[RMDB]
RNA sequence: GGGAACGACUCGAGUAGAGUCGAAAAUUGAUAAUUUGUUGUGUAACUUCAUUUAAAUGAAUUGAAACAACUUUAAUACAAGUGGAUGUAGGAUAACCGUCCGUCCUUUACAUUGGUAUAAAAGUGAACGACACAGACCUCUUCGGAGGUCUGUGAACUCUUAAACCUAGUUCGCUAGGUUUAAGAGAAAAGAAACAACAACAACAAC
Reactivity to 2A3 in 0.01 (KOAc 150mM, MgCl2 10mM, bicine 150mM(pH8.5), 24C), signal-to-noise 2, nucleotides 027 to 156: u080u080g030a030u080a180a130u010u000u150g000u030u020g000u010g040u040a070a090c080u040u040c010a050u140u290u260a190a260a090u090g020a050a030u070u040g070a150a010a000c020a000a020c010u060u040u100a110a030u060a040c020a070a060g030u110g060g040a040u040g090u120a030g020g030a020u020a100a080c070c010g050u070c000c000g000u000c010c000u050u060u010a050c020a090u030u080g010g000u060a070u030a090a090a000a000g060u040g080a060a040c110g100a020c030a000c000a000g000a000c000c000u000c010u020u020c070g140g000a000g030g010u010c010u000g000u000g000a000a000
Reactivity to DMS in 0.01 (KOAc 150mM, MgCl2 10mM, bicine 150mM(pH8.5), 24C), signal-to-noise 1, nucleotides 027 to 156: u000u000g010a140u010a080a130u000u000u000g000u010u020g000u020g010u010a150a120c070u000u000c000a030u000u020u020a070a110a170u000g000a050a050u000u020g020a150a090a040c020a080a040c010u000u000u000a120a090u000a080c050a020a050g010u010g000g000a120u000g010u000a020g000g020a020u010a030a120c090c140g000u010c060c040g030u020c020c020u010u000u000a050c060a040u000u010g010g000u000a030u000a060a060a060a020g000u000g020a050a130c020g010a170c000a000c000a070g080a010c000c000u000c000u010u000c290g020g030a000g000g020u000c000u010g000u020g000a020a060
Conditions: 150 mM KOAc, 10 mM MgCl2 and 150 mM bicine (pH 8.5), 24 C.
An RNA of 207 nucleotides, treated with 2A3 and DMS and read out base by base.
For 2A3, 994 sequencing reads were counted.
For 2A3 the reverse transcriptase was SuperScript II with manganese.